RNA sequence: GGGAACGACUCGAGUAGAGUCGAAAACGCACGCGAGAAGGCUCAGCAGGCAUUGGCUGCCAAGGGUGGUUUCAACCAGAAGCAGGAAAAGAAGCCCGAGGGUGUCGUUCACUCACCGGCAACUGUUGAACCUUCCCUCGACAUCGAACUUCCUGCCCUAAAAACUUACUUUCGAGUAAGUUUUUAGAAAAGAAACAACAACAACAAC
Reactivity to DMS in 0.01 (KOAc 150mM, MgCl2 10mM, bicine 150mM(pH8.5), 24C), signal-to-noise 2, nucleotides 027 to 156: c070g040c080a100c000g010c040g000a060g000a090a070g030g000c010u000c000a100g010c020a060g030g020c110a200u030u000g020g020c020u000g010c010c030a080a220g000g030g020u000g000g000u010u010u000c070a080a090c000c020a070g010a150a060g020c000a060g010g000a090a110a090a200g020a120a130g000c010c020c050g020a010g030g010g000u010g000u000c090g000u000u010c030a020c030u000c020a100c060c040g000g040c020a070a090c020u000g000u000u010g000a030a010c000c010u000u000c010c000c010u010c000g040a230c020a040u000c050g000a140a130c070u000u000c010c000u010g010c120c100
Reactivity to 2A3 in 0.01 (KOAc 150mM, MgCl2 10mM, bicine 150mM(pH8.5), 24C), signal-to-noise 4, nucleotides 027 to 156: c040g050c030a020c050g020c030g010a020g010a070a030g030g000c010u010c030a020g000c010a010g070g000c050a120u100u160g130g020c040u030g000c010c030a090a070g060g000g020u080g030g070u050u150u150c070a080a050c010c020a030g020a110a000g010c040a030g040g040a060a100a030a060g070a070a020g020c010c060c020g010a080g020g020g000u030g050u130c060g020u090u130c000a010c010u040c010a100c080c000g050g000c040a090a070c060u040g020u070u010g010a000a000c010c000u050u070c020c000c000u040c010g030a050c010a070u180c040g020a050a050c010u010u010c000c010u020g020c000c020